[RMDB]
RNA sequence: GGGAACGACUCGAGUAGAGUCGAAAAGCUACUUGUGUGAGAAUACUUUUAGUACAAGCGAGUACACGCAGUAUACUGCUACUUGUGUGAGAAUACUUUUAGUACAAGCGAGUACACGCAGUAUACUGCACUACCGGAUAUUCGUAUCCGGUAGUGCAAAAGAAACAACAACAACAAC
Reactivity to 2A3 in 0.01 (KOAc 150mM, MgCl2 10mM, bicine 150mM(pH8.5), 24C), signal-to-noise 4, nucleotides 027 to 126: g040c010u030a000c000u080u060g000u010g000u030g050a090g060a150a140u190a260c050u110u060u090u100a020g040u020a050c030a110a050g050c040g100a000g060u050a020c100a010c110g020c000a000g020u000a000u020a030c030u000g010c000u000a000c000u000u000g020u010g010u080g130a120g090a090a060u050a050c010u040u130u130u300a040g000u000a010c010a110a000g030c000g030a010g000u020a020c060a000c060g000c000a000g000u000a010u010a000c020u000
Reactivity to DMS in 0.01 (KOAc 150mM, MgCl2 10mM, bicine 150mM(pH8.5), 24C), signal-to-noise 2, nucleotides 027 to 126: g010c070u000a020c030u020u000g020u000g000u020g000a110g000a120a230u070a020c070u000u020u010u010a060g000u000a020c090a070a100g000c110g000a070g020u030a030c180a030c090g030c000a010g030u000a000u000a000c010u000g000c010u000a030c000u000u000g000u010g000u040g000a150g000a110a140u000a020c020u000u000u000u040a110g000u000a000c060a060a140g000c010g010a040g000u000a020c300a130c300g010c000a030g000u010a000u000a000c000u000
Chemical mapping of a 177-nucleotide RNA with 2A3 and DMS. The 2A3 profile rests on 2,482 reads. Values cover nucleotides 27 to 126. It was measured as part of the RMDB library OK1LIB. The DMS profile rests on 1,951 reads.